An RNA of 177 nucleotides, treated with DMS and read out base by base. It was measured as part of the RMDB library RFMREP. The DMS profile rests on 607 reads. DMS adducts were read by reverse transcription with MarathonRT.
[RMDB]
RNA sequence: GGGAACGACUCGAGUAGAGUCGAAAAGGGACACCAUAAGUGCAUGUUUCAAAACUAUUAAUAUGUUGUAGCCUUCUUUCUUCAAACAUUGCACUCUGUUGUUGCUUUUCCUUAAGAAAUCUUUUCUACAUGUUAACGUGUUCGCACGUUAACAUGUAAAAGAAACAACAACAACAAC
Reactivity to DMS in 0.01 (KOAc 150mM, MgCl2 10mM, bicine 150mM(pH8.5), 24C), signal-to-noise 1, nucleotides 027 to 126: g000g000g020a060c020a050c040c000a030u000a070a030g020u000g000c000a010u000g000u000u000u000c180a070a090a060a080c100u000a300u030u010a040a030u030a040u010g020u000u000g000u000a080g040c130c100u000u000c120u000u000u000c080u000u000c050a020a010a020c000a050u000u000g010c020a020c000u000c190u000g000u010u030g010u000u000g010c050u000u010u000u000c020c010u000u000a150a170g050a080a080a060u000c030u030u010u030u000c140u010